Chemical mapping of a 177-nucleotide RNA with 2A3 and DMS.
For 2A3, 1,340 sequencing reads were counted.

[RMDB]
RNA sequence: GGGAACGACUCGAGUAGAGUCGAAAAUAAUAUGCAUAUCGAGUUCCCAUGUAUUUUCGUAGCCCUGCGGCUGUAACAUUACAGCUUAGUAAGAAUGCUACCUAACGAUAGCAAGCCGCAGGAUUAAAUCCAUAGGGUAGUUCGCUACCCUAUGGAUAAAAGAAACAACAACAACAAC
Reactivity to 2A3 in 0.01 (KOAc 150mM, MgCl2 10mM, bicine 150mM(pH8.5), 24C), signal-to-noise 2, nucleotides 027 to 126: u040a000a050u140a060u170g100c050a030u050a080u190c070g050a050g060u010u000c060c000c000a000u040g020u000a130u000u080u000u050c070g010u010a030g020c000c010c010u010g020c030g000g000c010u030g080u060a020a070c110a080u020u020a020c020a070g140c110u040u040a040g000u000a050a020g020a110a020u040g000c000u000a000c040c020u100a170a030c060g100a140u000a030g000c020a020a010g000c000c010g020c000a000g000g000a000u000u020a000a020
Reactivity to DMS in 0.01 (KOAc 150mM, MgCl2 10mM, bicine 150mM(pH8.5), 24C), signal-to-noise 5, nucleotides 027 to 126: u000a070a100u000a060u000g010c050a090u000a080u000c090g030a190g000u000u000c000c010c000a130u010g010u000a040u000u000u010u000c070g010u000a080g010c100c010c000u000g020c010g010g000c000u000g010u000a060a120c210a150u000u000a010c020a130g000c190u010u000a100g010u010a010a050g010a090a160u000g000c000u000a010c030c030u000a120a120c250g000a040u000a020g010c010a070a040g010c010c000g010c010a000g000g000a020u000u000a040a130
The reactions ran in a buffer of 150 mM KOAc, 10 mM MgCl2 and 150 mM bicine (pH 8.5), at 24 C. 2A3 adducts were read by reverse transcription with SuperScript II with manganese.